[RMDB]
RNA sequence: GGGAACGACUCGAGUAGAGUCGAAAAGAUUAAGUGGGAGCGUCGCCCUUUCGGUGCAUCGGAUAUUAAUUAGCCAGUGCGUGGCAAUACGCAUAUUGAUGUCUACUUUGGCGUAGACUUUGCCAAUUUAAGGAUUGAUGGGCAAUCCAGCCCUAGAAGUACUAAAUGACUUCGGUCAUUUAGUACUAAAAGAAACAACAACAACAAC
Reactivity to DMS in 0.01 (KOAc 150mM, MgCl2 10mM, bicine 150mM(pH8.5), 24C), signal-to-noise 3, nucleotides 027 to 156: g010a170u000u000a030a130g020u010g010g010g000a100g020c040g030u000c030g030c020c010c020u010u000u000c080g030g000u000g000c030a060u020c010g020g010a070u010a070u010u000a040a130u000u010a130g040c020c010a080g020u000g020c000g020u000g020g020c100a080a170u000a030c060g030c020a050u000a070u000u010g010a100u000g020u000c020u010a040c020u000u000u010g020g020c080g040u000a060g000a050c050u000u000u000g000c040c020a010a110u000u000u000a080a100g010g000a110u000u000g000a130u020g000g000g010c030a060a070u000c090c050a150g010c000c000c000u000a060g020a090
Reactivity to 2A3 in 0.01 (KOAc 150mM, MgCl2 10mM, bicine 150mM(pH8.5), 24C), signal-to-noise 4, nucleotides 027 to 156: g070a060u160u150a070a070g070u130g010g010g030a030g040c020g010u040c030g020c010c010c060u040u050u050c080g030g000u050g000c040a090u030c070g040g010a010u020a030u120u160a120a040u090u110a020g030c020c010a010g000u020g050c010g010u030g050g000c070a030a060u170a060c020g010c010a010u040a080u090u110g080a080u080g020u010c010u010a030c000u070u100u150g050g000c060g000u020a040g020a030c000u030u040u060g020c010c010a040a040u020u100u120a090a070g030g020a020u020u040g020a050u080g050g010g000c000a000a000u050c030c030a020g000c000c000c000u010a030g010a050
Structure probing data (DMS and 2A3) for a 207-nucleotide construct.
DMS adducts were read by reverse transcription with MarathonRT.
The RNA was probed in 150 mM KOAc, 10 mM MgCl2 and 150 mM bicine (pH 8.5) at 24 C.
It was measured as part of the RMDB library OK3TST.
2A3 adducts were read by reverse transcription with SuperScript II with manganese.